[RMDB]
RNA sequence: GGGAACGACUCGAGUAGAGUCGAAAACCUGGUUUCCCCUGAUGUCCAGUCCCUCCCCCGUCCGAGCGAAGGGGGACUCCGGAACAUCUUCCAUUCGAGGGACGAAGCCGCCACCGGGCGCUCCCCUUACACAUAAUAAGUUCGCUUAUUAUGUGUAAAAAGAAACAACAACAACAAC
Reactivity to 2A3 in 0.01 (KOAc 150mM, MgCl2 10mM, bicine 150mM(pH8.5), 24C), signal-to-noise 3, nucleotides 027 to 126: c000c000u030g130g010u050u090u050c000c010c000c020u030g010a020u030g020u030c030c020a020g020u020c020c000c000u030c020c020c010c010c000g040u020c040c020g110a100g040c100g040a010a050g000g010g000g000g000a000c010u030c040c050g000g020a030a030c000a030u000c000u140u020c050c010a100u140u160c060g050a080g020g000g010a010c020g010a030a010g040c060c000g040c030c020a100c060c080g080g020g010c010g000c000u020c000c000c000c010u000
Reactivity to DMS in 0.01 (KOAc 150mM, MgCl2 10mM, bicine 150mM(pH8.5), 24C), signal-to-noise 6, nucleotides 027 to 126: c020c010u010g010g000u000u000u000c010c000c030c120u010g010a030u010g000u000c020c030a090g010u000c010c030c040u000c000c010c010c020c010g010u000c040c060g020a140g020c090g010a080a060g010g010g000g010g010a020c030u010c070c060g010g000a130a060c050a040u000c020u000u010c100c070a150u000u000c130g020a070g000g000g010a060c070g000a090a070g020c080c020g010c020c050a100c070c090g000g000g020c020g000c030u000c010c000c010c080u000
Chemical mapping of a 177-nucleotide RNA with 2A3 and DMS. For DMS the reverse transcriptase was MarathonRT. Reactivities are given for positions 27 through 126. Conditions: 150 mM KOAc, 10 mM MgCl2 and 150 mM bicine (pH 8.5), 24 C. The data come from the RNA Mapping Database (RMDB), library VIROID. 2A3 adducts were read by reverse transcription with SuperScript II with manganese. For 2A3, 5,319 sequencing reads were counted.